Chemical mapping of a 177-nucleotide RNA with 2A3 and DMS. 2A3 adducts were read by reverse transcription with SuperScript II with manganese. Reactivities are rounded to 0.1 and cut off at 0 and 3. Source: RMDB library OK2TRN, as collected in RNAgym. Conditions: 150 mM KOAc, 10 mM MgCl2 and 150 mM bicine (pH 8.5), 24 C.
[RMDB]
RNA sequence: GGGAACGACUCGAGUAGAGUCGAAAAGGGGGACGGUAGCAGCUGCACCCACGUGACGGGCAACUAUCGCAAGGGGAAUGCCCACCUUGGUAAGCCACAGCGCGCCCUGGAGUCCAAGCACAGCAGACUCUUAUAACUAGUUCGCUAGUUAUAAGAGAAAAGAAACAACAACAACAAC
Reactivity to 2A3 in 0.01 (KOAc 150mM, MgCl2 10mM, bicine 150mM(pH8.5), 24C), signal-to-noise 5, nucleotides 027 to 126: g040g000g010g000g010a010c050g020g050u110a030g010c050a010g020c000u050g000c030a070c000c030c000a020c060g050u070g050a040c060g030g000g000c020a060a030c080u080a050u160c050g010c110a050a050g030g000g010g020a100a110u110g020c010c000c000a060c010c000u020u020g030g010u060a070a030g010c010c010a070c040a060g020c050g000c000g030c040c000c010u020g010g020a030g010u000c020c010a030a000g060c050a030c020a060g060c010a010g020a120
Reactivity to DMS in 0.01 (KOAc 150mM, MgCl2 10mM, bicine 150mM(pH8.5), 24C), signal-to-noise 9, nucleotides 027 to 126: g010g000g020g010g020a130c060g010g010u000a050g020c060a090g010c040u010g010c150a130c040c020c040a060c180g010u000g010a060c100g010g010g010c070a060a120c070u000a060u010c060g010c100a090a130g000g000g010g000a100a090u010g000c030c020c020a090c060c030u000u010g010g010u000a080a100g010c030c040a060c090a100g010c060g010c080g010c020c020c020u000g000g010a110g010u000c020c030a060a080g010c090a060c100a070g000c120a100g010a170